[RMDB]
RNA sequence: GGGAACGACUCGAGUAGAGUCGAAAAGGAGGAGUUCUACAUAGAUCCUGUCCCAAACCCGACCACGAAAGUGGUUAUCGUGCCUUACAGGAUCUAGGCUGGUUUGGGAGAUUCUCCGGAACUCUGAACCGACGUGCAUGUUCGCAUGUACGUCGGUAAAAGAAACAACAACAACAAC
Reactivity to DMS in 0.01 (KOAc 150mM, MgCl2 10mM, bicine 150mM(pH8.5), 24C), signal-to-noise 2, nucleotides 027 to 126: g010g000a160g010g000a020g020u000u000c010u000a100c130a120u000a040g000a060u000c020c040u000g000u010c000c000c000a030a030a020c020c020c300g000a030c000c000a000c010g000a060a080a130g040u000g000g000u010u000a040u010c180g000u010g000c010c010u000u000a210c100a120g000g000a100u010c060u010a030g020g020c040u000g020g010u000u000u000g000g020g020a060g000a080u000u010c010u000c120c080g000g000a020a010c020u000c010u000g010a150
Reactivity to 2A3 in 0.01 (KOAc 150mM, MgCl2 10mM, bicine 150mM(pH8.5), 24C), signal-to-noise 2, nucleotides 027 to 126: g090g010a010g000g010a010g000u000u030c010u050a060c040a190u230a030g060a050u030c030c010u050g160u070c000c000c000a000a000a000c000c000c020g010a010c000c010a010c000g090a110a040a020g030u000g010g030u010u030a040u040c070g010u090g000c000c000u090u060a060c060a130g300g000a140u030c060u030a000g000g000c030u030g020g020u010u050u020g020g040g000a030g010a060u090u000c020u000c020c090g020g020a010a010c020u000c000u020g050a030